RNA sequence: GGGAACGACUCGAGUAGAGUCGAAAACAAUGCAGGUUAAGCCAAAGGGAUGUCCCGACCGGAGGCCGACAAUCCAGGGAACCGGAUGUCAUAACGUUGUUGCAGUACCAGAUGGCAUCUUAAAUCCAAAAGAACACAUAGUUCGCUAUGUGUUCAACAAUUGAAAGUCGUUCGCGACUUUCAAUUGAAAAGAAACAACAACAACAAC
Reactivity to 2A3 in 0.01 (KOAc 150mM, MgCl2 10mM, bicine 150mM(pH8.5), 24C), signal-to-noise 2, nucleotides 027 to 156: c040a010a130u160g080c030a040g170g030u120u120a040a030g000c010c000a010a000a040g020g000g010a050u020g020u010c000c010c010g010a000c010c000g000g000a020g020g010c000c000g000a010c030a130a050u090c110c110a050g020g020g050a020a070c060c000g010g020a000u020g000u010c010a020u060a130a080c090g020u000u000g010u000u030g000c090a030g040u140a150c050c020a020g010a130u020g000g000c000a010u020c000u010u060a020a030a060u040c010c000a050a060a010a050g000a000a000c000a000c000a000u010a010g030u050u030c030g010c040u010a000u000g000u000g000u000u000c000a010a000
Reactivity to DMS in 0.01 (KOAc 150mM, MgCl2 10mM, bicine 150mM(pH8.5), 24C), signal-to-noise 2, nucleotides 027 to 156: c020a140a100u020g010c100a140g020g030u000u000a060a100g050c040c000a070a300a300g010g000g000a070u000g000u000c010c000c010g000a300c020c000g000g000a300g020g040c040c000g000a080c060a060a120u010c030c040a050g020g020g010a060a130c000c020g010g000a020u000g030u000c020a040u000a140a130c120g000u000u010g030u000u020g000c000a100g020u000a030c060c010a130g000a060u000g000g020c030a030u000c000u000u000a010a070a150u010c000c030a050a040a140a080g000a010a000c010a010c010a030u000a020g020u000u000c300g040c020u010a000u010g010u000g070u010u000c010a010a070
This 207-nucleotide RNA was probed chemically with 2A3 and DMS. Source: RMDB library M2RFPK, as collected in RNAgym. DMS adducts were read by reverse transcription with MarathonRT. The RNA was probed in 150 mM KOAc, 10 mM MgCl2 and 150 mM bicine (pH 8.5) at 24 C. High 2A3 reactivity points to a flexible backbone, as in loops and unpaired stretches. High DMS reactivity at an A or C suggests that its Watson-Crick edge is free. For 2A3 the reverse transcriptase was SuperScript II with manganese.